Background: This 207-nucleotide RNA was probed chemically with DMS and 2A3. It was measured as part of the RMDB library RSTRND. 2A3 adducts were read by reverse transcription with SuperScript II with manganese. Reactivities are given for positions 27 through 156.

[RMDB]
RNA sequence: GGGAACGACUCGAGUAGAGUCGAAAAUUUAAGUCAUACUAUCUAGCUUAAUUUUCGGUCAUUUUUGAUAGUGUAGCCUUGCGUUUGACAAGCGUUGAGGUGAAAUAAGGUCUUAGCCUUGCUUUUGAGUUUUGGAAGAUGAGCGAAGUAGGGUGAACUAAACUACGAAGUUCGCUUCGUAGUUUAGAAAAGAAACAACAACAACAAC
Reactivity to DMS in 0.01 (KOAc 150mM, MgCl2 10mM, bicine 150mM(pH8.5), 24C), signal-to-noise 4, nucleotides 027 to 156: u010u000u000a000a020g020u000c010a280u000a040c030u000a030u000c010u000a300g000c000u000u000a010a010u000u010u000u000c010g050g000u060c130a220u010u010u000u000u010g000a010u010a020g030u000g000u000a090g000c000c000u000u000g020c000g000u000u010u000g030a080c060a240a300g010c000g020u000u010g030a020g020g020u000g000a090a030a140u010a090a120g020g010u000c020u000u010a190g000c010c010u000u000g010c020u010u000u000u010g010a170g000u000u000u010u000g020g020a150a160g020a080u010g020a100g030c100g000a020a070g010u000a040g020g000g000u000g010a080a130
Reactivity to 2A3 in 0.01 (KOAc 150mM, MgCl2 10mM, bicine 150mM(pH8.5), 24C), signal-to-noise 9, nucleotides 027 to 156: u040u030u020a020a010g020u050c000a000u010a050c000u000a000u000c000u000a000g000c000u010u020a020a030u040u060u060u120c110g100g040u100c170a260u090u130u140u140u210g000a000u000a000g000u010g000u010a000g000c000c000u000u010g000c000g080u040u020u030g020a010c010a030a000g000c000g040u070u300g030a000g000g000u020g020a000a000a010u220a070a050g110g000u000c000u020u270a010g000c000c000u000u020g000c010u040u060u070u130g120a090g060u100u100u140u150g100g040a070a070g040a110u140g020a020g070c030g010a010a000g000u010a010g020g000g000u020g000a010a000